[RMDB]
RNA sequence: GGGAACGACUCGAGUAGAGUCGAAAACAUGCCUAUGGGACCCAAAUUUGUGGAUCAAAGAGCUUAUUCUGGAAGAGUGAGCGUGCUCGGAGCACUUGAGCACCGGGGCGUCAUUGUGAAUGGAGGAAGAAUAAUCGUUUUUCGAAACGAUUAUUCUAAAAGAAACAACAACAACAAC
Reactivity to DMS in 0.01 (KOAc 150mM, MgCl2 10mM, bicine 150mM(pH8.5), 24C), signal-to-noise 7, nucleotides 027 to 126: c080a080u000g010c030c020u010a070u000g020g010g000a130c020c010c020a070a110a150u000u000u010g030u010g000g010a090u000c040a070a060a090g010a080g000c060u000u000a050u000u000c030u000g010g000a130a100g000a040g020u010g000a070g010c040g020u000g000c010u000c030g010g000a140g020c070a120c150u000u020g010a070g010c020a060c020c070g000g000g000g000c050g010u000c050a040u000u000g020u000g000a090a080u010g000g000a080g010g010a120
Reactivity to 2A3 in 0.01 (KOAc 150mM, MgCl2 10mM, bicine 150mM(pH8.5), 24C), signal-to-noise 5, nucleotides 027 to 126: c010a030u090g040c000c010u120a120u090g040g000g060a080c020c000c000a030a070a070u180u120u090g030u060g070g030a050u080c040a040a070a030g060a020g000c010u110u080a050u130u000c030u040g070g040a080a010g030a070g070u030g010a040g040c020g000u050g120c020u000c020g020g010a030g050c020a030c100u180u210g070a030g030c010a020c010c010g000g010g020g020c010g010u030c020a030u040u140g120u030g090a070a050u090g050g030a040g040g050a090